[RMDB]
RNA sequence: GGGAACGACUCGAGUAGAGUCGAAAAGCUAAGAAACGUUAGUAUAUCCAUACAAUGGAAUACCUCAUUUCUAAAAUAGUAUUCGUUUUCUAAUUCUUUAAUGUGAAAUCGUAUACUAGAAAGGGAAAAAUUAUCUUUGAGUUUUCCGUUAGAAAAGAUCCGUCGUAUGAUUCGUCAUACGACGGAUAAAAGAAACAACAACAACAAC
Reactivity to 2A3 in 0.01 (KOAc 150mM, MgCl2 10mM, bicine 150mM(pH8.5), 24C), signal-to-noise 1, nucleotides 027 to 156: g050c000u000a030a070g000a100a270a020c100g040u060u080a040g000u080a050u030a050u060c040c030a010u140a290c110a090a140u060g000g000a000a000u010a080c000c030u020c010a080u000u050u020c060u000a090a120a060a000u020a030g010u000a010u000u030c010g040u000u020u000u000c010u050a180a180u040u030c060u210u300u240a090a030u080g090u010g040a000a000a000u030c000g000u000a000u000a010c000u030a040g060a100a000a040g010g090g000a000a000a000a000a080u300u210a100u150c060u070u060u070g040a090g030u000u060u030u000c000c000g050u030u120a080g030a110a050a020a000g150